An RNA of 177 nucleotides, treated with 2A3 and DMS and read out base by base.
For 2A3 the reverse transcriptase was SuperScript II with manganese.
Values cover nucleotides 27 to 126.
The DMS profile rests on 1,516 reads.
It was measured as part of the RMDB library TTRINS.
The reactions ran in a buffer of 150 mM KOAc, 10 mM MgCl2 and 150 mM bicine (pH 8.5), at 24 C.
High 2A3 reactivity points to a flexible backbone, as in loops and unpaired stretches.
[RMDB]
RNA sequence: GGGAACGACUCGAGUAGAGUCGAAAAGAUAUGGAGGUCGAACUACCUGCUGUCACUCGAAGAACAUCUACUGAUCGGAAACGAUCAGUAGAUGGGAGAGUGAUACAGCAGGCGACCUCCUAAGUCAUCCUACCAUAGGGUUCGCCCUAUGGUAGGAAAAAGAAACAACAACAACAAC
Reactivity to 2A3 in 0.01 (KOAc 150mM, MgCl2 10mM, bicine 150mM(pH8.5), 24C), signal-to-noise 2, nucleotides 027 to 126: g040a000u040a040u090g010g010a000g000g000u010c000g010a100a020c080u200a140c300c000u000g020c000u010g030u100c000a000c000u070c080g300a300a300g140a300a070c000a010u000c000u000a000c000u010g010a000u000c010g000g010a030a030a060c000g010a010u000c000a000g000u000a000g000a000u000g000g040g000a110g000a040g010u000g000a020u100a060c000a000g000c020a010g040g030c010g000a000c000c000u000c020c010u000a000a000g000u000c000a030
Reactivity to DMS in 0.01 (KOAc 150mM, MgCl2 10mM, bicine 150mM(pH8.5), 24C), signal-to-noise 1, nucleotides 027 to 126: g030a040u000a180u010g030g030a020g010g020u000c000g010a070a040c040u000a300c010c000u000g000c010u000g000u000c010a010c000u000c010g000a150a250g000a130a180c000a000u000c000u000a000c000u000g000a010u000c000g000g000a080a040a090c010g010a000u010c000a010g010u020a000g010a000u000g000g010g000a240g010a010g020u010g010a140u010a040c050a010g000c000a000g030g010c020g000a010c010c000u000c000c010u000a000a030g000u000c000a200